[RMDB]
RNA sequence: GGGAACGACUCGAGUAGAGUCGAAAACCGGAUUCGUCCGGAAGCGCCCGUAGGAGCCUGAACUACCUGUAUCCUACUCGAUGAAAGAGAUUCGAAAGAGUCUCUGGAGAGUAGGUACAGGCAGGCUCCUAAACGGAUUUAGUGGAUUCGUCCACAACAAAAGGAAAACAUUCGUGUUUUCCUUUUGAAAAGAAACAACAACAACAAC
Reactivity to 2A3 in 0.01 (KOAc 150mM, MgCl2 10mM, bicine 150mM(pH8.5), 24C), signal-to-noise 2, nucleotides 027 to 156: c000c000g000g010a080u090u100c160g030u010c060c000g000g040a140a050g070c070g030c000c000c000g000u070a000g000g000a000g000c000c000u000g020a050a020c050u150a060c170c000u020g010u090a110u300c020c000u040a030c000u000c000g300a300u010g000a000a000a000g000a000g000a000u000u020c010g020a040a030a080g010a010g010u000c000u000c000u000g000g010a010g000a000g000u000a000g000g000u000a000c000a000g000g000c000a000g000g000c000u000c000c020u000a000a000a000c020g030g000a000u030u060u190a040g000u010g030g000a020u000u050c150g030u020c090c010a020c020a030a020
Reactivity to DMS in 0.01 (KOAc 150mM, MgCl2 10mM, bicine 150mM(pH8.5), 24C), signal-to-noise 2, nucleotides 027 to 156: c000c000g010g000a060u000u010c300g030u000c000c010g040g020a100a070g010c110g000c040c000c010g060u000a070g030g030a040g030c000c020u000g030a110a190c030u020a230c010c000u000g000u000a000u000c000c000u000a000c020u000c000g000a190u020g030a190a220a050g010a050g020a040u000u010c000g020a180a130a300g000a030g030u000c000u000c000u000g000g020a030g020a050g010u000a000g000g010u000a000c010a010g000g010c010a010g020g000c010u000c000c000u000a000a010a120c030g000g000a090u010u000u000a090g010u000g000g010a100u000u010c130g000u010c020c010a040c000a060a300
Conditions: 150 mM KOAc, 10 mM MgCl2 and 150 mM bicine (pH 8.5), 24 C. The record gives the reactivity of an RNA of 207 nucleotides to 2A3 and DMS. For DMS, 3,003 sequencing reads were counted. It was measured as part of the RMDB library RNAMAK. For 2A3 the reverse transcriptase was SuperScript II with manganese.